[RMDB]
This 177-nucleotide RNA was probed chemically with DMS and 2A3.
RNA sequence: GGGAACGACUCGAGUAGAGUCGAAAAUGCCGUGACCACAAUAUUCACGUACUACUGAGAAGUUUUCUGCUUCUACAAACUUCUGGAUCUCUUUGCCUAAAGUGCGCAGACGGAUACCCGGUUUAACGGAUGAUUCAGCAUUCGUGCUGAAUCAUCCAAAAGAAACAACAACAACAAC
Reactivity to DMS in 0.01 (KOAc 150mM, MgCl2 10mM, bicine 150mM(pH8.5), 24C), signal-to-noise 1, nucleotides 027 to 126: u000g040c060c000g030u000g010a010c140c040a090c150a130a110u000a070u000u000c060a100c060g010u000a110c040u000a120c140u000g020a000g000a040a040g030u000u000u000u000c140u020g020c120u000u000c030u010a150c160a050a060a040c020u000u000c090u010g020g010a080u030c070u010c140u000u020u000g010c000c060u000a070a130a070g020u020g050c050g040c030a000g000a100c120g010g000a040u010a060c020c000c110g000g010u000u000u030a040a150c220
Reactivity to 2A3 in 0.01 (KOAc 150mM, MgCl2 10mM, bicine 150mM(pH8.5), 24C), signal-to-noise 1, nucleotides 027 to 126: u090g010c030c000g000u000g050a110c000c050a050c090a080a060u090a080u120u060c030a030c030g030u090a060c070u040a030c010u060g030a010g010a110a000g050u070u020u050u040c090u120g090c000u120u000c010u020a050c030a020a040a010c000u060u000c020u040g120g000a140u020c030u000c010u100u090u060g020c010c010u120a260a150a000g070u050g070c050g000c040a000g020a050c040g020g020a010u030a130c010c010c000g080g080u070u110u050a050a050c050
Annotation
2A3 adducts were read by reverse transcription with SuperScript II with manganese. For DMS, 708 sequencing reads were counted. For DMS the reverse transcriptase was MarathonRT. The RNA was probed in 150 mM KOAc, 10 mM MgCl2 and 150 mM bicine (pH 8.5) at 24 C. Source: RMDB library OK2TST, as collected in RNAgym.